[RMDB]
An RNA of 170 nucleotides, treated with 2A3 and DMS and read out base by base. For 2A3 the reverse transcriptase was SuperScript II with manganese. It was measured as part of the RMDB library 15KLIB. Values cover nucleotides 27 to 129. For 2A3, 44,513 sequencing reads were counted.

RNA sequence: GGGAACGACUCGAGUAGAGUCGAAAACGCCUACUUUGGAUGUGAGGAAGGUACUAUGUACUUUGUGCCUAGAGCUAAGUCUGUUGUCUCAAGGAUUGGAGACUCCAUCUUUACAGGCUGUACUGGCUAAUCAUUAGAUUCGUCUAAUGAAAAAGAAACAACAACAACAAC
Reactivity to 2A3 in 0.01 (KOAc 150mM, MgCl2 10mM, bicine 150mM(pH8.5), 24C), signal-to-noise 9, nucleotides 027 to 129: c050g030c010c000u050a080c050u120u090u130g090g020a070u060g100u120g060a050g020g040a050a030g010g000u010a000c020u080a050u210g070u070a080c030u090u090u060g050u050g020c000c020u060a070g010a010g070c040u070a070a040g030u000c050u050g100u110u070g050u040c020u010c040a070a100g140g020a160u090u190g100g000a060g020a030c030u030c020c020a050u020c000u060u100u050a050c040a020g010g000c010u030g040u030a060c050u040g050g000c000u040a050a040
Reactivity to DMS in 0.01 (KOAc 150mM, MgCl2 10mM, bicine 150mM(pH8.5), 24C), signal-to-noise 9, nucleotides 027 to 129: c230g030c010c000u030a060c100u000u010u010g010g000a050u010g030u050g000a050g000g010a100a050g000g030u000a020c040u040a090u060g010u000a000c050u010u010u020g040u020g000c000c000u000a080g000a090g020c060u020a070a060g000u010c070u000g000u010u010g020u030c030u020c080a120a080g000g000a080u000u010g020g020a090g000a090c070u000c040c020a040u000c020u000u020u010a050c100a040g010g020c020u000g020u010a080c100u000g010g010c010u020a070a140